[RMDB]
RNA sequence: GGGAACGACUCGAGUAGAGUCGAAAAGGCAAAUGUUUGUAUAUUUGUGUUCAUUUGCCGGCCAAGCAACACAAAUAUACAAAGCUUGGCCACGACGGUGGACAUGCGAAAGCAUGUCCAUCGUCGAGCAGGAUGUAGGCUUCGGCCUACAUCCUGCAAAAGAAACAACAACAACAAC
Reactivity to 2A3 in 0.01 (KOAc 150mM, MgCl2 10mM, bicine 150mM(pH8.5), 24C), signal-to-noise 1, nucleotides 027 to 126: g010g020c000a020a000a090u040g020u020u030u010g050u030a020u000a010u070u060u050g060u010g010u000u000c140a160u090u090u090g050c010c000g010g000c000c010a040a010g070c050a000a020c000a000c000a070a070a000u070a020u040a020c070a000a030a000g020c000u020u010g030g000c000c000a010c000g020a000c000g000g020u000g000g000a010c000a000u000g010c000g080a160a000a010g020c000a000u000g000u000c000c000a000u000c000g000u010c000g000a010
The record gives the reactivity of an RNA of 177 nucleotides to 2A3.
The reactions ran in a buffer of 150 mM KOAc, 10 mM MgCl2 and 150 mM bicine (pH 8.5), at 24 C.
Values cover nucleotides 27 to 126.
For 2A3 the reverse transcriptase was SuperScript II with manganese.